Structure probing data (2A3) for a 207-nucleotide construct. Values cover nucleotides 27 to 156. Conditions: 150 mM KOAc, 10 mM MgCl2 and 150 mM bicine (pH 8.5), 24 C.
RNA sequence: GGGAACGACUCGAGUAGAGUCGAAAAACAGCGGAGUUCGCUCCGCUGUAAAAAGAUAUGGAUGUACAAACUUUUGACGCAACCAAGUCGGAAACGACUUGGAAUUGCGAUAAGUUUGACAUCCUAAGUCAAAAACUGAGGUAUUCGUACCUCAGAAUGUUCAAUCGAGUUUCGACUCGAUUGAACAAAAAGAAACAACAACAACAAC
Reactivity to 2A3 in 0.01 (KOAc 150mM, MgCl2 10mM, bicine 150mM(pH8.5), 24C), signal-to-noise 1, nucleotides 027 to 156: a000c010a000g000c010g000g000a000g040u040u020c080g080c080u010c020c010g020c000u000g020u000a000a020a000a000a000g000a000u030a010u000g000g000a000u000g000u040a250c010a000a000a010c040u040u080u220u280g300a080c080g000c010a000a000c010c000a000a000g000u010c000g000g000a000a000a010c000g000a000c000u000u000g000g000a050a050u050u010g000c000g020a110u080a250a010g010u000u000u000g000a010c000a000u000c000c000u000a000a000g020u000c010a000a000a170a130a040c000u000g000a010g040g010u000a060u000u170c200g030u060a020c000c000u000c000a000g000a020a110